Structure probing data (DMS and 2A3) for a 207-nucleotide construct. Values cover nucleotides 27 to 156. Source: RMDB library OK3TST, as collected in RNAgym.
RNA sequence: GGGAACGACUCGAGUAGAGUCGAAAAGGGACCGGUACGUCAAGCGGCUUAACCCCGGCCAGAUUGUCACCGUGACCAGCGUGUGGACCGCCGAGGACGGACACACCGCCGUUGCGUACGAGUGGCACGACCCCCGUGCCAGCCACACCGGCAGCGCGACGUACUACUAUUUCGAUAGUAGUACGUCAAAAGAAACAACAACAACAAC
Reactivity to DMS in 0.01 (KOAc 150mM, MgCl2 10mM, bicine 150mM(pH8.5), 24C), signal-to-noise 2, nucleotides 027 to 156: g000g010g000a110c000c020g010g050u000a010c030g060u010c060a150a110g010c050g010g020c030u010u000a100a150c040c070c010c000g010g050c000c030a170g010a110u000u000g010u000c020a080c060c040g050u010g000a280c080c050a090g030c020g000u010g000u010g000g010a170c010c000g050c020c010g020a140g000g020a150c020g000g000a240c050a080c050a080c040c000g060c010c000g030u000u000g020c020g000u000a100c050g020a100g010u010g010g000c010a050c010g000a250c020c010c050c020c000g000u000g020c000c030a130g050c020c020a180c050a220c020c020g000g000c050a050g000c060g020c040
Reactivity to 2A3 in 0.01 (KOAc 150mM, MgCl2 10mM, bicine 150mM(pH8.5), 24C), signal-to-noise 5, nucleotides 027 to 156: g040g000g010a060c020c030g030g000u060a070c050g020u020c090a060a100g060c010g050g060c050u110u150a120a110c010c010c000c010g000g050c020c010a070g080a180u110u170g040u030c040a000c020c000g020u040g120a120c040c030a030g030c060g000u140g000u040g050g080a160c010c000g000c020c060g120a160g060g050a070c040g000g020a010c020a000c010a020c080c040g020c010c020g050u060u080g030c030g020u020a010c040g010a060g060u070g010g020c000a020c020g120a160c010c020c000c010c000g010u010g000c000c000a010g050c040c000a070c010a060c010c040g040g010c010a020g070c040g020c080
Reactivities are rounded to 0.1 and cut off at 0 and 3. The reactions ran in a buffer of 150 mM KOAc, 10 mM MgCl2 and 150 mM bicine (pH 8.5), at 24 C. For DMS, 3,681 sequencing reads were counted. For 2A3 the reverse transcriptase was SuperScript II with manganese.